[RMDB]
RNA sequence: GGGAACGACUCGAGUAGAGUCGAAAACAUAUAUAUACUUUCCUUUAGGUUCCAAUACGAGAUUUUCUCCCUAUUUCUUUGCUUUUUUUUGUUGCCGUGCAAGGAAGGAAAAAGCCCUAUAGGGGAACAUACGGGUAAUAUUCGUAUUACCCGUAUGAAAAGAAACAACAACAACAAC
Reactivity to DMS in 0.01 (KOAc 150mM, MgCl2 10mM, bicine 150mM(pH8.5), 24C), signal-to-noise 4, nucleotides 027 to 126: c080a070u010a120u010a150u000a140u010a140c050u000u000u000c000c010u000u010u010a110g010g000u000u010c020c030a080a080u000a070c140g000a100g000a100u000u000u000u010c040u000c000c000c020u000a050u000u000u010c070u000u010u010g010c010u000u000u000u000u000u000u000u000g000u000u000g010c030c100g010u010g010c090a040a070g000g000a060a070g010g000a010a040a040a060a050g010c060c300c070u000a040u010a050g030g000g010g000a040a110
Reactivity to 2A3 in 0.01 (KOAc 150mM, MgCl2 10mM, bicine 150mM(pH8.5), 24C), signal-to-noise 1, nucleotides 027 to 126: c000a010u300a000u090a020u050a010u060a300c040u050u050u090c000c000u120u080u130a040g030g010u060u000c050c000a040a070u200a210c120g090a050g000a190u110u090u070u030c040u150c000c030c010u000a020u000u090u070c090u110u080u150g040c000u000u070u020u050u070u000u050u070g090u090u040g070c020c020g040u000g060c050a010a040g030g010a000a030g000g020a040a080a010a010a000g010c000c030c010u050a070u060a060g040g000g000g030a020a000